[RMDB]
RNA sequence: GGGAACGACUCGAGUAGAGUCGAAAAUCAGGUAGUUCGCUACCUGAGACCAUCCUAAGUCUUUCCGAAUUCCCGUAGGCAAGUCGGAAACGAUGAUGACCCUACGAGGAAUCUAGACAGAAAGAUAUGGACUCAACCGCAUUCUUCGGAAUGCGAACAUGCAUCGAAGGUUCGCCUUCGAUGCAUGAAAAGAAACAACAACAACAAC
Reactivity to 2A3 in 0.01 (KOAc 150mM, MgCl2 10mM, bicine 150mM(pH8.5), 24C), signal-to-noise 5, nucleotides 027 to 156: u030c000a000g010g000u010a010g020u060u090c300g020c150u010a000c000c000u000g000a000g000a000c000c010a070u030c000c000u060a140a060g030u000c000u010u000u000c010c030g070a070a070u010u000c000c000c000g010u000a000g010g010c060a130a060g010u000c010g080g010a170a070a070c030g020a030u070g040a090u070g050a070c010c010c000u010a010c010g030a230g120g000a000a000u000c010u070a090g050a110c030a050g000a010a000a000g000a000u020a050u130g010g000a050c060u080c220a110a170c110c010g000c000a000u010u000c000u020u070c200g130g000a000a010u000g000c000g010a010a020
Reactivity to DMS in 0.01 (KOAc 150mM, MgCl2 10mM, bicine 150mM(pH8.5), 24C), signal-to-noise 2, nucleotides 027 to 156: u000c010a040g040g000u010a010g010u000u010c300g050c000u010a000c000c000u000g000a020g000a060c060c010a160u000c000c000u000a060a300g010u000c000u000u000u000c000c010g000a190a290u000u000c000c000c040g060u000a070g000g000c040a050a190g000u000c010g020g000a150a100a170c020g030a030u000g010a100u010g000a150c300c000c000u000a040c000g030a160g060g000a110a020u010c060u000a110g010a230c110a060g010a020a010a020g000a020u000a300u000g000g030a060c100u010c120a040a130c150c000g030c020a080u000u000c000u000u000c280g060g000a040a010u010g050c030g000a060a100

Chemical mapping of a 207-nucleotide RNA with 2A3 and DMS. DMS adducts were read by reverse transcription with MarathonRT. It was measured as part of the RMDB library RNAMAK. The 2A3 profile rests on 4,785 reads.